[RMDB]
RNA sequence: GGGAACGACUCGAGUAGAGUCGAAAAAUAAUGUCCUCUUUGACGCAGGAAUAAAUCGCAUCCAGUCGAACUGCAUAUGCUGUGAGUUGGCCUAAUAUAGAGGUGCAUAGAGCUAAUACACAGGCACAUCUUCUCUUUUCUUCGGAAAAGAGAAGAUAAAAGAAACAACAACAACAAC
Reactivity to 2A3 in 0.01 (KOAc 150mM, MgCl2 10mM, bicine 150mM(pH8.5), 24C), signal-to-noise 3, nucleotides 027 to 126: a000u160a000a070u080g070u060c020c010u000c060u080u060u140g040a020c020g010c020a010g000g130a100a040u100a140a120a060u100c030g000c000a040u010c070c020a010g080u140c030g030a100a060c020u040g000c060a040u070a040u280g030c010u000g050u040g040a170g070u030u030g030g000c000c000u070a110a080u150a030u050a170g090a010g100g080u070g070c000a010u030a040g060a030g000c020u000a010a010u080a020c030a000c000a000g040g100c020a040c000
Reactivity to DMS in 0.01 (KOAc 150mM, MgCl2 10mM, bicine 150mM(pH8.5), 24C), signal-to-noise 4, nucleotides 027 to 126: a060u010a040a110u000g010u000c010c010u000c080u000u010u010g020a090c110g000c080a050g000g020a080a090u010a040a090a120u010c080g020c090a110u010c060c080a090g000u020c030g020a050a080c070u000g010c050a110u010a130u000g010c020u000g020u000g000a200g030u000u010g000g000c020c010u000a030a070u000a180u000a070g020a060g010g000u000g000c090a120u000a040g000a090g010c030u000a010a040u000a140c040a030c060a040g020g000c090a070c170